[RMDB]
The record gives the reactivity of an RNA of 207 nucleotides to DMS and 2A3.
RNA sequence: GGGAACGACUCGAGUAGAGUCGAAAACUCACUUUCUCUUCUUAUGGAAAUCUGGGUAAUGUCUAUUGGCAGCCUUACACAUCCAGGGUUCUGAUCAGAGGGGACUGUUUUCUACAUACAGCUAGUACCCAUCUAGAUCGUGGAGGGCAUUAAGGCACUCCUACGCAUAUUUCGAUAUGCGUAGGAGAAAAGAAACAACAACAACAAC
Reactivity to DMS in 0.01 (KOAc 150mM, MgCl2 10mM, bicine 150mM(pH8.5), 24C), signal-to-noise 2, nucleotides 027 to 156: c020u020c040a140c060u000u000u020c020u000c030u020u000c070u000u010a120u010g010g010a080a070a040u000c030u020g000g030g050u010a140a110u010g000u000c050u000a160u000u000g010g020c060a090g000c060c030u020u000a070c080a030c080a090u000c030c020a050g000g020g000u000u000c030u000g010a110u010c050a070g010a050g000g010g020g010a050c010u000g010u000u000u000u000c090u000a130c120a130u000a020c050a060g000c020u000a080g020u000a130c030c010c020a130u000c020u000a080g010a020u000c030g050u000g030g010a120g010g020g080c020a070u000u010a060a070g060g060c030a180
Reactivity to 2A3 in 0.01 (KOAc 150mM, MgCl2 10mM, bicine 150mM(pH8.5), 24C), signal-to-noise 5, nucleotides 027 to 156: c010u040c030a030c010u040u070u000c050u010c000u110u020c020u060u120a100u150g050g000a030a050a050u030c040u050g000g020g040u090a110a090u080g030u000c100u090a240u200u200g070g020c040a030g030c040c040u070u130a050c060a010c010a090u030c010c000a020g010g020g020u050u030c020u070g110a040u040c020a000g010a020g050g000g010g020a010c020u020g050u030u050u040u060c060u070a100c010a180u150a030c030a030g010c010u050a030g040u120a200c010c020c010a030u010c000u030a070g030a160u070c040g080u070g030g020a060g010g020g010c020a030u110u100a040a030g020g000c010a010